RNA sequence: GGGAACGACUCGAGUAGAGUCGAAAAGCAGAAAAAUCACCUCCAGAGGACCCCCUCAGCGAACAGAAGAGUCUCUCGCGCGGUAGGAGUAAGACCAUAGCGAUAGGUGGAGAUGCUGGGAGUUAGAGUAUAGUACGAACUUCGGUUCGUACUAUACAAAAGAAACAACAACAACAAC
Reactivity to DMS in 0.01 (KOAc 150mM, MgCl2 10mM, bicine 150mM(pH8.5), 24C), signal-to-noise 1, nucleotides 027 to 126: g040c100a120g010a030a100a050a080a160u020c040a110c080c070u000c070c030a180g040a090g000g000a180c120c040c030c030c050u000c030a100g000c030g030a120a050c100a100g000a060a030g000a110g040u000c000u000c060u000c020g000c030g000c060g000g000u000a050g000g000a100g000u000a000a070g000a030c030c040a070u000a090g020c030g020a150u000a040g010g020u000g000g010a050g000a120u020g000c030u010g010g010g030a100g000u000u000a100g000a140
This 177-nucleotide RNA was probed chemically with DMS.
High DMS reactivity at an A or C suggests that its Watson-Crick edge is free.
The RNA was probed in 150 mM KOAc, 10 mM MgCl2 and 150 mM bicine (pH 8.5) at 24 C.